RNA sequence: GGGAACGACUCGAGUAGAGUCGAAAAGAUAUGGACUAUCUAGGUCUUCGAGAGAUCGGAAACGAUGGAAUGAAGCCUACAUGAUAGUCCUAAGUCAAACGAACAGAUCCUUCGGGAUCUGUUCGAACGACAAACAUAACUUCGGUUAUGUUUGUCGAAAAGAAACAACAACAACAAC
Reactivity to 2A3 in 0.01 (KOAc 150mM, MgCl2 10mM, bicine 150mM(pH8.5), 24C), signal-to-noise 3, nucleotides 027 to 126: g010a000u080a040u140g000g010a000c000u000a010u030c000u020a030g000g080u110c040u040u000c030g160a190g000a000g000a070u000c010g000g020a010a060a030c010g000a020u030g040g090a090a080u060g010a000a000g000c000c000u050a060c070a210u170g000a000u000a000g000u020c000c000u010a060a000g010u020c050a080a050a070c030g010a000a010c000a000g010a020u000c020c000u080u180c300g080g000g000a010u000c000u000g000u000u010c000g000a010a000
Reactivity to DMS in 0.01 (KOAc 150mM, MgCl2 10mM, bicine 150mM(pH8.5), 24C), signal-to-noise 4, nucleotides 027 to 126: g040a040u010a300u010g000g000a000c000u000a000u000c000u010a020g000g000u010c020u000u000c010g000a130g010a300g010a030u000c000g010g010a140a080a240c000g010a020u000g000g010a300a130u000g010a030a020g000c000c000u000a040c300a070u000g010a010u000a000g000u000c000c010u000a010a080g010u010c030a060a080a270c010g010a010a010c000a010g020a000u000c010c000u000u000c240g020g000g000a000u000c000u000g000u000u000c000g010a010a090